[RMDB]
RNA sequence: GGGAACGACUCGAGUAGAGUCGAAAAGCACCUCUGGCCAAUGAGACGCAGACUGAGAAAGGAUCCAUGUGGGGGAUUUCACCUCUUGCAGCUCCAAACAGACUCUUGGAUAAUGGUGUGGCCUAAGGGAGUCGGUUACCUUCGGGUAACCGAUUCCAAAAGAAACAACAACAACAAC
Reactivity to DMS in 0.01 (KOAc 150mM, MgCl2 10mM, bicine 150mM(pH8.5), 24C), signal-to-noise 6, nucleotides 027 to 126: g010c060a060c020c010u000c150u030g000g020c000c020a060a060u030g000a030g000a130c110g010c110a070g000a110c060u000g000a100g000a090a100a150g000g000a040u010c080c060a100u030g020u000g020g000g000g010g010a130u020u040u030c130a120c060c030u000c020u010u000g010c050a060g000c160u010c020c080a050a070a120c110a060g000a120c050u010c010u010u010g010g000a040u030a040a070u000g000g010u010g010u000g000g000c010c020u010a050a090g010
Reactivity to 2A3 in 0.01 (KOAc 150mM, MgCl2 10mM, bicine 150mM(pH8.5), 24C), signal-to-noise 9, nucleotides 027 to 126: g010c000a030c010c000u020c080u080g090g000c010c010a050a060u220g010a020g020a060c060g010c110a030g040a140c020u040g010a020g100a090a120a050g030g010a020u030c030c030a080u080g010u070g020g010g010g020g010a010u070u150u170c120a130c050c010u020c000u050u110g000c020a020g020c010u000c010c010a040a090a080c010a020g030a090c010u000c000u020u020g020g010a030u040a110a100u150g020g010u020g020u040g040g030c010c000u030a060a050g110